Conditions: 150 mM KOAc, 10 mM MgCl2 and 150 mM bicine (pH 8.5), 24 C. Structure probing data (2A3 and DMS) for a 177-nucleotide construct. 2A3 adducts were read by reverse transcription with SuperScript II with manganese.
RNA sequence: GGGAACGACUCGAGUAGAGUCGAAAACAUAAGCAUGUACCCGUUUGCUCAAACACAAGAGAUGGUACUUGUUUAAGUACCGAACAAAUUGAUGUAUUAGCCAACAUUUACCGUGGUCCUGUAAAUAACGUACUCGAUGGUUCGCCAUCGAGUACGUAAAAGAAACAACAACAACAAC
Reactivity to 2A3 in 0.01 (KOAc 150mM, MgCl2 10mM, bicine 150mM(pH8.5), 24C), signal-to-noise 2, nucleotides 027 to 126: c020a030u120a120a080g130c040a050u040g010u110a040c000c010c030g020u040u070u050g000c040u050c020a030a080a060c030a040c010a100a040g020a010g030a150u140g000g000u000a010c000u010u060g110u150u220u100a000a000g000u000a010c000c020g010a080a010c040a000a080a060u070u110g050a180u060g040u020a160u060u030a000g000c020c030a000a010c010a020u030u130u070a060c060c030g020u060g030g020u010c000c030u040g020u100a090a080a060u180a000
Reactivity to DMS in 0.01 (KOAc 150mM, MgCl2 10mM, bicine 150mM(pH8.5), 24C), signal-to-noise 2, nucleotides 027 to 126: c050a060u010a240a130g000c060a100u000g010u000a120c080c030c110g020u010u010u000g010c030u000c130a070a050a060c110a030c080a050a070g000a160g010a120u000g000g020u000a000c000u000u010g000u020u000u010a000a010g000u010a010c000c000g000a090a090c110a030a050a100u000u000g000a080u000g010u010a070u020u010a060g020c080c050a020a040c040a070u000u010u000a040c140c060g020u000g000g020u000c040c020u000g010u000a050a040a080u010a130